[RMDB]
RNA sequence: GGGAACGACUCGAGUAGAGUCGAAAAGUUGAUACCGUACGUUACCAUACUGAGUCUCUUCGGCAUGUGGGUGCUCGCUUGGAACUCAUCGAAUGUAGAAUUUUAUACCUCCAAAUUGGAGCGCAGACUGCACUUUCAUAUUCGUAUGAAAGUGCAGAAAAGAAACAACAACAACAAC
Reactivity to DMS in 0.01 (KOAc 150mM, MgCl2 10mM, bicine 150mM(pH8.5), 24C), signal-to-noise 3, nucleotides 027 to 126: g010u000u000g000a150u030a060c040c030g040u010a090c090g020u010u010a090c090c020a080u000a100c140u020g000a090g000u000c070u020c090u000u000c040g010g020c060a030u000g010u000g020g000g010u000g010c050u020c050g020c090u000u000g000g000a060a070c080u000c050a070u000c160g030a100a050u000g000u010a070g010a060a090u000u010u000u040a120u000a120c110c010u000c000c010a040a100a190u010u000g020g000a050g000c160g060c120a050g000a210
Reactivity to 2A3 in 0.01 (KOAc 150mM, MgCl2 10mM, bicine 150mM(pH8.5), 24C), signal-to-noise 2, nucleotides 027 to 126: g100u110u090g100a050u090a100c000c040g010u080a020c040g010u000u020a100c060c050a030u070a170c060u020g010a020g040u010c020u010c000u150u080c070g050g030c050a030u140g020u190g100g090g010u020g030c090u090c060g120c070u000u010g010g000a010a010c010u030c070a050u070c120g010a030a010u060g000u080a100g070a060a040u000u110u020u170a140u050a080c010c000u000c000c010a130a200a210u220u170g030g000a000g000c090g060c030a010g040a060